[RMDB]
Chemical mapping of a 177-nucleotide RNA with DMS and 2A3. Source: RMDB library OK2TST, as collected in RNAgym.
RNA sequence: GGGAACGACUCGAGUAGAGUCGAAAACACUGAUUAUUAUUAGUGCAUCACAUGUGUAGAAAACUCAGUGGUUUGCCUGAUUAAGCUAGCUGAAUAGUGGGAUGCCAUAUUCCACAGCUUAUAUGAAACCAUAUGAGCCUUUCGAGGCUCAUAUGGUAAAAGAAACAACAACAACAAC
Reactivity to DMS in 0.01 (KOAc 150mM, MgCl2 10mM, bicine 150mM(pH8.5), 24C), signal-to-noise 2, nucleotides 027 to 126: c000a010c020u000g020a060u010u000a070u030u010a150u020u000a180g000u010g010c020a040u000c190a100c120a290u000g040u000g010u000a070g000a050a070a090a070c300u010c010a010g010u000g000g000u000u000u000g000c010c020u010g000a100u010u000a000a020g000c000u000a030g000c140u000g010a080a030u000a040g030u000g020g010g010a080u000g000c110c080a040u000a030u000u010c010c030a030c040a050g010c000u000u000a030u000a120u000g010a110a080
Reactivity to 2A3 in 0.01 (KOAc 150mM, MgCl2 10mM, bicine 150mM(pH8.5), 24C), signal-to-noise 2, nucleotides 027 to 126: c000a000c000u000g000a040u020u120a060u070u040a040u020u070a230g080u050g040c000a060u110c050a050c060a220u190g030u030g000u100a060g060a150a090a000a000c020u000c000a000g020u010g000g130u050u080u080g050c030c010u050g040a110u050u040a000a000g020c020u040a000g020c010u020g080a080a050u030a070g070u050g020g010g050a050u140g170c060c000a040u060a010u080u020c000c000a010c000a020g000c020u060u020a060u010a020u130g090a210a000